[RMDB]
This 177-nucleotide RNA was probed chemically with DMS. Reactivities are rounded to 0.1 and cut off at 0 and 3. Conditions: 150 mM KOAc, 10 mM MgCl2 and 150 mM bicine (pH 8.5), 24 C. The data come from the RNA Mapping Database (RMDB), library TTRINS.

RNA sequence: GGGAACGACUCGAGUAGAGUCGAAAAGAUAUGGACAGACAUGCGAUUCGGUAGCGAUGAAAACUACAGGGAUCGGAAACGAUCCCUGUAGUUGGAGCUACUCCUUUCGCAACAGCUGUCCUAAGUCGUUUACUAGACUGUUCGCAGUCUAGUAAACAAAAGAAACAACAACAACAAC
Reactivity to DMS in 0.01 (KOAc 150mM, MgCl2 10mM, bicine 150mM(pH8.5), 24C), signal-to-noise 2, nucleotides 027 to 126: g000a100u010a300u010g000g020a000c010a000g010a020c090a300u000g010c010g000a010u000u020c210g010g000u000a010g010c010g010a120u000g010a140a060a020a010c000u000a010c000a020g010g000g000a020u000c020g020g000a080a120a250c000g000a040u000c000c010c010u000g000u000a000g000u000u000g000g000a070g040c010u000a010c010u000c030c070u000u000u000c020g020c020a040a080c260a190g000c010u000g000u000c000c000u000a030a110g030u000c130